[RMDB]
RNA sequence: GGGAACGACUCGAGUAGAGUCGAAAACAGGAAAAUUGGUAGAGAGAAGAACGUCAACACCCUGGAACAGAAAUUGAGCUCCGCCAUCCGCAUUGGACACCUGCGCUCGCGAAACUCGAUGAAGAGACCACACUCAUUAGUUCGCUAAUGAGUGUGGAAAAGAAACAACAACAACAAC
Reactivity to 2A3 in 0.01 (KOAc 150mM, MgCl2 10mM, bicine 150mM(pH8.5), 24C), signal-to-noise 5, nucleotides 027 to 126: c030a000g070g070a050a000a070a120u190u160g020g030u180a080g020a040g010a020g010a140a030g050a080a050c050g020u030c020a030a010c000a050c080c000c000u030g040g070a090a040c000a060g120a070a110a030u220u180g020a030g030c010u010c040c010g000c020c020a060u050c010c020g080c050a080u020u120g050g020a020c010a040c050c030u040g000c030g030c030u020c030g000c000g000a080a020a010c000u020c030g110a120u140g150a060a050g000a000g030a070
Reactivity to DMS in 0.01 (KOAc 150mM, MgCl2 10mM, bicine 150mM(pH8.5), 24C), signal-to-noise 3, nucleotides 027 to 126: c040a150g000g000a030a050a080a150u030u000g000g000u050a060g020a060g000a100g000a130a100g000a080a080c060g010u000c020a060a110c060a050c040c170c050u040g010g000a090a080c100a070g000a060a090a080u010u030g020a070g010c050u000c020c040g000c000c010a050u020c040c020g000c060a000u010u030g000g000a060c030a040c020c040u000g000c040g010c050u000c030g010c010g000a140a040a040c000u010c020g000a080u020g000a170a040g000a070g000a210
Conditions: 150 mM KOAc, 10 mM MgCl2 and 150 mM bicine (pH 8.5), 24 C. Chemical mapping of a 177-nucleotide RNA with 2A3 and DMS. For DMS, 3,755 sequencing reads were counted. For DMS the reverse transcriptase was MarathonRT.